[RMDB]
RNA sequence: GGGAACGACUCGAGUAGAGUCGAAAAAUUCAUUUGAGGGAACAUGGCGUCUUUCACUCCCUGAACCAGAGAUAUUCAAUUGGUUUCGACAUAUGGAGGAGAACGAUUCAUCAGCAUCAAUAGCGUAUGCAGAUGGUGUACGUCAGAUACUGUCUGGCAACGGGUCUACAUUCGUGUAGACCCGUUGAAAAGAAACAACAACAACAAC
Reactivity to 2A3 in 0.01 (KOAc 150mM, MgCl2 10mM, bicine 150mM(pH8.5), 24C), signal-to-noise 3, nucleotides 027 to 156: a000u100u060c100a070u130u040u190g040a030g000g010g030a050a110c030a110u060g020g000c020g000u020c000u020u050u030c060a050c040u010c000c000c000u010g020a000a000c000c000a010g040a000g050a230u080a140u300u180c100a150a100u170u070g010g040u000u010u060c100g040a080c090a120u270a070u100g000g020a030g000g030a070g030a090a010c070g060a060u070u090c000a030u000c010a000g000c000a000u020c040a040a210u140a190g120c070g160u160a010u030g000c000a000g030a080u070g020g050u050g030u080a040c030g000u020c020a000g000a070u070a060c090u130g020u080c010u000g040g030
Reactivity to DMS in 0.01 (KOAc 150mM, MgCl2 10mM, bicine 150mM(pH8.5), 24C), signal-to-noise 1, nucleotides 027 to 156: a060u000u000c020a100u000u000u010g020a070g070g010g010a110a100c060a110u000g030g020c090g010u010c050u010u000u000c020a110c020u030c040c000c020u000g000a070a100c000c000a080g050a300g040a100u010a130u020u000c070a110a240u000u030g030g000u010u010u000c010g000a150c100a140u010a040u000g010g010a050g010g000a190g000a010a070c050g000a110u000u000c020a140u000c020a060g020c020a040u010c040a060a130u000a120g050c060g000u010a020u000g000c000a230g010a080u000g040g030u000g040u000a030c000g030u000c030a170g010a060u010a030c030u010g000u000c020u020g010g000
Source information: Conditions: 150 mM KOAc, 10 mM MgCl2 and 150 mM bicine (pH 8.5), 24 C. An RNA of 207 nucleotides, treated with 2A3 and DMS and read out base by base. The DMS profile rests on 2,033 reads. Reactivities are rounded to 0.1 and cut off at 0 and 3. For 2A3, 1,274 sequencing reads were counted. For 2A3 the reverse transcriptase was SuperScript II with manganese. As a SHAPE reagent, 2A3 marks flexible, mostly unpaired nucleotides at the ribose 2'-OH.